Chemical mapping of a 177-nucleotide RNA with DMS and 2A3. The RNA was probed in 150 mM KOAc, 10 mM MgCl2 and 150 mM bicine (pH 8.5) at 24 C. Reactivities are given for positions 27 through 126. As a SHAPE reagent, 2A3 marks flexible, mostly unpaired nucleotides at the ribose 2'-OH. It was measured as part of the RMDB library M2PK90. For DMS, 788 sequencing reads were counted.

RNA sequence: GGGAACGACUCGAGUAGAGUCGAAAAAUAAAGAGCGUAAACGCGUCAUUGAGUGUCGUGAAGAUCAUCCAAGUGUGCUGUCUACAGUCGUAGAUAGCGCACAUUACGCUAAGAUGAUCAUAAAAAACGAGUUUAACCACUUCGGUGGUUAAACUCGAAAAGAAACAACAACAACAAC
Reactivity to DMS in 0.01 (KOAc 150mM, MgCl2 10mM, bicine 150mM(pH8.5), 24C), signal-to-noise 1, nucleotides 027 to 126: a070u030a030a130a060g000a230g000c020g060u000a020a140a240c080g010c040g000u000c020a090u020u000g030a080g010u000g000u010c020g030u000g020a100a110g020a020u000c020a010u000c000c130a070a060g020u000g010u000g000c010u010g000u000c000u000a000c020a150g050u000c180g020u000a000g000a000u000a020g000c020g010c010a000c020a080u000u000a040c050g000c110u000a080a070g000a020u000g020a020u020c020a180u030a000a060a110a060a060a070
Reactivity to 2A3 in 0.01 (KOAc 150mM, MgCl2 10mM, bicine 150mM(pH8.5), 24C), signal-to-noise 1, nucleotides 027 to 126: a000u250a010a130a000g050a000g020c010g010u020a000a050a030c010g020c000g000u000c050a080u100u300g080a090g160u070g010u040c000g010u010g130a170a040g010a020u010c000a000u030c020c010a110a010g000u000g010u000g000c000u000g010u050c000u000a030c080a190g180u280c210g020u110a000g010a040u010a000g020c000g000c010a000c010a000u000u030a040c000g000c010u000a050a000g010a030u040g020a000u000c020a030u300a010a090a020a010a000a010